[RMDB]
RNA sequence: GGGAACGACUCGAGUAGAGUCGAAAAAUCAACGCGGUGGUCGCCGAUGUGCAGAGCUUCGCCGCCGAGUACCGGGAGGCGGUCGGCACCGCCUCAGACAAGCUGGCGUCGAUCAGCAACGCGCUGGGAUAUCCGUGGGGUUCGCCCCACGGAUAUCAAAAGAAACAACAACAACAAC
Reactivity to 2A3 in 0.01 (KOAc 150mM, MgCl2 10mM, bicine 150mM(pH8.5), 24C), signal-to-noise 4, nucleotides 027 to 126: a000u120c050a030a040c030g020c030g030g040u080g040g060u050c040g000c040c000g010a070u060g060u050g040c070a040g020a030g110c020u050u060c040g000c010c000g040c000c010g070a020g020u060a090c040c040g060g060g010a010g000g000c010g000g020u030c030g110g000c050a010c020c000g020c000c000u030c010a020g030a010c040a060a030g020c010u030g010g000c020g050u070c040g050a160u120c060a000g060c040a060a040c060g010c020g000c040u060g060g090
Reactivity to DMS in 0.01 (KOAc 150mM, MgCl2 10mM, bicine 150mM(pH8.5), 24C), signal-to-noise 2, nucleotides 027 to 126: a110u030c070a050a160c160g000c040g000g040u030g000g020u020c040g030c020c020g000a000u020g000u000g030c020a030g000a300g020c020u000u000c010g020c070c000g010c000c000g010a160g020u000a110c180c070g000g000g010a010g010g010c000g020g040u000c110g000g000c080a160c030c000g000c010c000u000c030a060g000a080c120a090a180g000c000u030g000g010c020g000u020c040g000a060u020c050a020g000c000a170a130c100g000c020g000c000u020g000g000